An RNA of 207 nucleotides, treated with DMS and 2A3 and read out base by base. For DMS, 2,599 sequencing reads were counted. For 2A3, 847 sequencing reads were counted. The RNA was probed in 150 mM KOAc, 10 mM MgCl2 and 150 mM bicine (pH 8.5) at 24 C. DMS adducts were read by reverse transcription with MarathonRT.
[RMDB]
RNA sequence: GGGAACGACUCGAGUAGAGUCGAAAAAGCCAUGUUGGUGAGUAUAGCUAUGGGGGUACACCUAGUUACAUUCCGAACCUAGAAGUUAAGCCCAUAUACGCUGAUGGUACUUGGCUGGAAGCGGCCAGGGAGAGUAUGGAUUUGCCAAGCGCUGAAAGACUAAGAUGGACUUCGGUCCAUCUUAGUCAAAAGAAACAACAACAACAAC
Reactivity to DMS in 0.01 (KOAc 150mM, MgCl2 10mM, bicine 150mM(pH8.5), 24C), signal-to-noise 1, nucleotides 027 to 156: a140g010c000c030a140u020g020u020u010g000g050u010g000a090g020u000a070u000a030g000c030u000a010u000g020g030g000g020g040u010a110c100a090c020c010u000a020g000u010u010a010c040a200u000u000c090c110g010a070a140c180c040u000a090g000a120a060g020u000u000a150a150g000c050c030c010a070u000a110u020a040c050g030c020u000g040a120u020g030g020u000a090c010u000u000g020g020c000u010g000g010a160a070g020c110g020g040c000c000a090g010g020g000a090g010a060g020u000a080u000g060g010a070u000u000u000g040c000c000a010a060g020c030g000c020u000g000a070a100a160
Reactivity to 2A3 in 0.01 (KOAc 150mM, MgCl2 10mM, bicine 150mM(pH8.5), 24C), signal-to-noise 2, nucleotides 027 to 156: a000g090c080c000a060u080g050u080u010g010g010u020g070a020g040u100a090u030a130g020c050u020a020u030g060g000g000g010g000u050a010c000a020c040c000u000a010g010u160u120a000c020a020u140u160c090c000g010a000a000c000c010u050a060g030a250a010g110u070u080a010a080g030c030c000c000a030u040a010u010a030c050g000c040u010g000a100u020g010g000u000a040c020u030u020g000g000c020u000g050g010a110a040g080c050g010g000c050c000a020g010g010g020a090g000a000g000u120a020u120g030g060a030u100u090u070g000c030c070a030a040g080c050g010c060u060g020a120a050a030